Source: RMDB library 15KLIB, as collected in RNAgym.
An RNA of 170 nucleotides, treated with 2A3 and DMS and read out base by base.
For DMS the reverse transcriptase was MarathonRT.
The DMS profile rests on 10,772 reads.
High DMS reactivity at an A or C suggests that its Watson-Crick edge is free.
For 2A3 the reverse transcriptase was SuperScript II with manganese.
Conditions: 150 mM KOAc, 10 mM MgCl2 and 150 mM bicine (pH 8.5), 24 C.
Reactivities are given for positions 27 through 129.
The 2A3 profile rests on 3,886 reads.
Values are in units of 0.01, from 0 to 300, in steps of 10.
[RMDB]
RNA sequence: GGGAACGACUCGAGUAGAGUCGAAAACGCGAGGAGGUGGAGAUCCCAUGCCGACCCGAAGAGGAAAGGAGGACACGGACGACAAACCGUGAGUUCUAUUGCCCUUUAUUGUUGGGUGCACCCUGGGUACGUGGCCGUUUCGACGGCCACAAAAGAAACAACAACAACAAC
Reactivity to 2A3 in 0.01 (KOAc 150mM, MgCl2 10mM, bicine 150mM(pH8.5), 24C), signal-to-noise 2, nucleotides 027 to 129: c080g050c030g010a040g000g020a010g000g010u080g030g000a070g010a060u130c000c060c020a010u110g000c010c000g020a070c020c000c000g000a010a020g010a000g000g000a020a000a010g010g010a000g000g020a000c010a000c020g010g030a050c060g000a030c050a000a100a010c000c000g000u030g010a060g000u020u050c010u080a090u010u190g040c000c000c000u040u140u090a050u020u120g090u060u060g000g020g000u000g000c030a110c010c000c010u020g000g060g020u010a100c070
Reactivity to DMS in 0.01 (KOAc 150mM, MgCl2 10mM, bicine 150mM(pH8.5), 24C), signal-to-noise 2, nucleotides 027 to 129: c100g030c070g000a040g000g010a020g000g000u070g000g000a000g020a100u090c110c010c040a140u050g000c060c040g040a090c110c060c080g000a000a040g030a070g020g020a020a060a040g100g000a070g060g000a110c060a050c040g020g020a060c000g080a140c300a050a020a030c000c050g020u070g030a100g020u050u020c060u030a100u000u030g030c000c000c000u000u070u020a090u000u000g000u000u030g000g020g030u020g030c130a090c000c000c000u010g030g010g040u070a060c120